[RMDB]
RNA sequence: GGGAACGACUCGAGUAGAGUCGAAAAGAUAUGGAUGUGACCCAGCUCCAAACAGCAACAGCCGGAUAAUUUGCUCGGAAACGAGCAAAUUAUCCGGACAUGCUGGUAGAGCUGCACAUCCUAAGUCGAGUCAUUAAUUGUUCGCAAUUAAUGACUCAAAAGAAACAACAACAACAAC
Reactivity to DMS in 0.01 (KOAc 150mM, MgCl2 10mM, bicine 150mM(pH8.5), 24C), signal-to-noise 2, nucleotides 027 to 126: g000a140u010a300u010g000g010a010u010g000u010g030a300c230c260c100a030g000c020u010c000c070a060a190a250c000a010g000c010a020a090c260a260g000c010c000g030g000a020u000a010a000u000u000u000g010c000u000c000g030g010a100a100a190c000g000a030g010c000a000a000a000u000u000a000u010c000c000g000g000a010c040a100u000g030c000u000g010g060u000a060g000a020g010c000u000g010c000a000c000a000u000c010c020u000a020a060g010u000c080
An RNA of 177 nucleotides, treated with DMS and read out base by base. For DMS the reverse transcriptase was MarathonRT. The RNA was probed in 150 mM KOAc, 10 mM MgCl2 and 150 mM bicine (pH 8.5) at 24 C. Source: RMDB library TTRINS, as collected in RNAgym.